[RMDB]
RNA sequence: GGGAACGACUCGAGUAGAGUCGAAAAGGCGGCUUUCGAGCCGCCCAAGCGGGGUCGUACUAAGACAGGACAUGCCUGGUGACUGAAGCCUCCACGGUCACUGGGCAACAGCUCGAGUACGACGGAGGCACCCUGACCUCCCGUUUUCGAACGGGAAAUCAUUUGAAAAUUUCGAUUUUCAAAUGAUAAAAGAAACAACAACAACAAC
Reactivity to 2A3 in 0.01 (KOAc 150mM, MgCl2 10mM, bicine 150mM(pH8.5), 24C), signal-to-noise 2, nucleotides 027 to 156: g000g000c030g010g030c060u060u100u210c240g040a010g000c010c000g000c010c000c000a020a010g060c100g010g060g030g000u010c000g030u020a000c000u090a200a230g030a100c100a070g100g150a090c080a140u110g000c020c000u020g000g000u000g000a010c000u060g010a080a010g000c000c000u000c000c010a010c020g000g000u000c000a000c000u010g000g010g040c000a020a010c050a010g020c030u000c010g020a000g000u000a000c000g000a000c000g000g000a000g000g000c010a010c000c000c020u040g070a070c050c000u020c000c000c000g020u000u000u030u050c110g110a010a000c000g000g010g000a080a000